[RMDB]
RNA sequence: GGGAACGACUCGAGUAGAGUCGAAAAGCUGCCUCUGACGUCCUUAAGGGUGGUAAAGCGGGUCUCCCCCGGAAACUGGGACGCGCCUGGCGCUUGCACGGGUAUGCGUGGCGGUCGACCCUGGCCGCGCACGUCCUACUUUCGAGUAGGACGUGCGAAAAGAAACAACAACAACAAC
Reactivity to DMS in 0.01 (KOAc 150mM, MgCl2 10mM, bicine 150mM(pH8.5), 24C), signal-to-noise 2, nucleotides 027 to 126: g020c020u000g040c030c000u010c080u020g020a170c070g010u000c000c010u010u000a140a160g020g010g010u010g020g000u000a010a080a160g010c090g010g010g010u000c070u000c020c010c000c000c030g010g010a070a100a110c180u010g000g000g000a020c020g020c070g010c090c030u010g000g020c040g020c090u000u000g000c060a070c110g000g000g020u010a070u000g020c050g020u000g010g020c010g000g020u000c020g000a140c040c020c020u010g010g000c000c000g010
Reactivity to 2A3 in 0.01 (KOAc 150mM, MgCl2 10mM, bicine 150mM(pH8.5), 24C), signal-to-noise 1, nucleotides 027 to 126: g000c010u030g000c050c000u010c050u080g100a130c020g020u010c000c010u070u090a070a110g050g030g040u120g000g020u080a080a080a020g040c020g010g140g130u020c080u020c050c000c000c010c030g080g090a090a120a090c100u140g000g060g000a020c050g020c000g030c010c000u010g090g000c050g010c090u030u070g000c130a080c030g030g060g010u160a040u300g020c020g000u020g030g030c020g010g030u040c010g060a090c000c030c000u010g080g000c000c010g040
Overview: Chemical mapping of a 177-nucleotide RNA with DMS and 2A3. For 2A3, 1,530 sequencing reads were counted. High 2A3 reactivity points to a flexible backbone, as in loops and unpaired stretches. Conditions: 150 mM KOAc, 10 mM MgCl2 and 150 mM bicine (pH 8.5), 24 C. For DMS the reverse transcriptase was MarathonRT. The data come from the RNA Mapping Database (RMDB), library OK2TRN.